[RMDB]
RNA sequence: GGGAACGACUCGAGUAGAGUCGAAAAUCACAAAGCGGAUUUAGCUCGGUUGGGAGAGGUCCAGACCGAUGAUCUGGGAAUCCUGUGUCCGAGACACAGAAUUCGCACCAUAAACAACGGGAGAUUCCCCUACCGCACGUUUCGACGUGCGGUAGGGAAAAGAAACAACAACAACAAC
Reactivity to 2A3 in 0.01 (KOAc 150mM, MgCl2 10mM, bicine 150mM(pH8.5), 24C), signal-to-noise 1, nucleotides 027 to 126: u070c000a010c060a140a000a000g040c000g000g000a000u000u000u000a000g000c000u000c000g000g000u020u210g010g000g000a040g000a000g000g040u040c000c000a000g000a000c000c190g290a300u130g040a130u200c000u010g000g040g000a000a080u000c000c000u010g080u160g000u270c000c040g030a000g140a040c060a000c000a040g060a000a000u000u000c000g020c000a060c000c000a030u110a110a210a000c120a030a030c030g040g000g000a220g000a000u080u080c030